The data come from the RNA Mapping Database (RMDB), library OK3TST. This 207-nucleotide RNA was probed chemically with 2A3 and DMS.

[RMDB]
RNA sequence: GGGAACGACUCGAGUAGAGUCGAAAAUUGGGUAAACACCUUUAAUAAGCGACAGAGGCAGUGUAGCGUAAUGGCCUCGCGGUCGUAACUGGGGUAUCGGCGCUGAUAUUUGACCACCAACGUGUACAUGACGUUCCACAGGUCCACGGCAAUGGGGCUAUCUCUCUCAAUUCGUUGAGAGAGAUAGAAAAGAAACAACAACAACAAC
Reactivity to 2A3 in 0.01 (KOAc 150mM, MgCl2 10mM, bicine 150mM(pH8.5), 24C), signal-to-noise 4, nucleotides 027 to 156: u040u010g020g000g040u050a050a090a040c060a080c030c030u020u050u090a270a200u210a160a050g040c020g030a030c030a070g030a020g020g000c030a040g030u060g040u260a060g030c040g030u100a070a120u130g110g010c010c000u030c000g010c080g040g000u030c010g010u010a020a020c030u040g030g000g000g000u050a070u140c060g020g000c040g000c040u040g040a030u020a140u180u130u170g040a030c020c010a020c040c030a050a020c030g020u030g020u100a030c030a060u140g120a040c040g030u040u060c010c000a050c000a040g040g040u020c030c010a010c030g010g000c010a010a080u080g010g020g000g000
Reactivity to DMS in 0.01 (KOAc 150mM, MgCl2 10mM, bicine 150mM(pH8.5), 24C), signal-to-noise 2, nucleotides 027 to 156: u020u010g020g000g020u000a100a060a070c060a100c020c000u000u000u000a070a090u000a080a110g060c000g000a100c040a200g010a080g010g040c020a090g050u000g020u000a100g010c100g040u010a070a090u000g020g020c000c000u000c030g020c160g020g000u010c020g020u000a050a090c090u010g000g030g020g000u000a060u000c050g000g000c030g020c010u010g000a050u010a120u010u000u010g020a070c060c030a050c050c010a060a050c010g010u010g010u000a090c060a060u000g010a030c050g010u000u020c020c020a080c050a030g030g000u000c010c010a030c040g030g030c090a090a100u000g010g000g010g000
The reactions ran in a buffer of 150 mM KOAc, 10 mM MgCl2 and 150 mM bicine (pH 8.5), at 24 C. 2A3 is a SHAPE reagent: it acylates the 2'-hydroxyl of flexible nucleotides of all four kinds.